[RMDB]
RNA sequence: GGGAACGACUCGAGUAGAGUCGAAAAUUAGGCCAUAAAAGGUCAGAUCGCAUUGUUGUUUACAUCUGGAAUGGCAAUGUUAAAUUUAUCAGAUUAGUUAAUUUGAUUAGCCGUGUGUUAUGGCGUACAAAUUGAUGAAAUUCAAAUGAUAGCACUAGAUAACUUAGUAGUUCGCUACUAAGUUAUCAAAAGAAACAACAACAACAAC
Reactivity to DMS in 0.01 (KOAc 150mM, MgCl2 10mM, bicine 150mM(pH8.5), 24C), signal-to-noise 4, nucleotides 027 to 156: u010u010a070g020g000c000c010a080u010a110a120a210a210g020g010u000c000a040g010a070u010c090g000c030a070u000u000g020u000u000g030u000u000u000a070c070a090u000c030u000g010g010a060a040u000g010g000c020a020a030u000g010u000u000a030a060a120u010u010u010a040u010c030a070g000a050u000u000a240g020u000u000a020a020u000u000u010g000a180u000u000a150g030c000c000g000u000g010u000g000u000u000a030u000g020g020c000g030u000a110c020a010a010a020u000u000g000a030u000g010a100a060a150u010u000c100a050a040a090u010g000a090u000a030g000c010a030c050u000a200
Reactivity to 2A3 in 0.01 (KOAc 150mM, MgCl2 10mM, bicine 150mM(pH8.5), 24C), signal-to-noise 9, nucleotides 027 to 156: u160u080a070g000g000c020c010a060u220a140a160a030a030g010g000u020c030a030g060a120u110c060g000c010a000u000u000g010u000u010g020u010u010u010a010c010a020u000c010u010g000g010a010a010u010g010g000c000a000a000u010g010u050u110a050a120a180u200u240u100a090u100c000a000g000a010u000u030a010g010u000u020a010a020u020u010u010g100a150u070u150a020g000c010c030g100u090g000u000g000u110u020a010u020g000g000c010g000u010a010c000a010a010a000u010u010g010a010u020g020a020a020a050u200u230c120a030a010a010u070g110a010u070a000g000c000a000c020u020a040
Chemical mapping of a 207-nucleotide RNA with DMS and 2A3. For DMS the reverse transcriptase was MarathonRT. The 2A3 profile rests on 16,828 reads. The DMS profile rests on 10,870 reads. The reactions ran in a buffer of 150 mM KOAc, 10 mM MgCl2 and 150 mM bicine (pH 8.5), at 24 C.